[RMDB]
RNA sequence: GGGAACGACUCGAGUAGAGUCGAAAAGUAAUUGGUUAUCAAUGGAAACAGCUGUUUGUUUGCCACACGAGUCACGGUAUAGCCAGCCAAAGAUUCACCGGGAGGCACCCGGCACUGCAGCAUACUGCGUCGCAGGAUAUUUCGAUAUCCUGCGACGAAAAGAAACAACAACAACAAC
Reactivity to 2A3 in 0.01 (KOAc 150mM, MgCl2 10mM, bicine 150mM(pH8.5), 24C), signal-to-noise 3, nucleotides 027 to 126: g070u080a010a140u090u080g030g030u110u170a050u180c090a070a060u100g050g050a040a080a090c010a050g050c030u050g050u070u060u090g030u070u080u070g070c020c000a030c000a010c090g030a020g120u130c010a020c090g040g000u020a020u070a040g020c000c020a010g000c000c000a020a110a020g020a010u030u130c040a020c030c000g000g040g000a110g020g030c020a080c020c020c000g020g000c000a050c030u020g010c000a020g000c010a020u020a090c040u020g070
Reactivity to DMS in 0.01 (KOAc 150mM, MgCl2 10mM, bicine 150mM(pH8.5), 24C), signal-to-noise 2, nucleotides 027 to 126: g030u010a080a010u020u010g000g010u000u060a070u000c100a060a060u060g020g010a040a050a040c090a070g030c010u000g050u030u000u020g000u000u020u010g000c040c000a050c100a070c020g000a180g020u000c010a130c140g020g000u000a030u040a100g000c000c050a050g000c010c050a210a070a110g030a060u000u000c070a130c000c040g020g030g010a080g010g000c050a070c040c010c000g000g000c090a000c010u000g020c030a000g000c090a030u000a020c060u050g000
Structure probing data (2A3 and DMS) for a 177-nucleotide construct. The 2A3 profile rests on 1,228 reads. DMS adducts were read by reverse transcription with MarathonRT. Values cover nucleotides 27 to 126. Conditions: 150 mM KOAc, 10 mM MgCl2 and 150 mM bicine (pH 8.5), 24 C.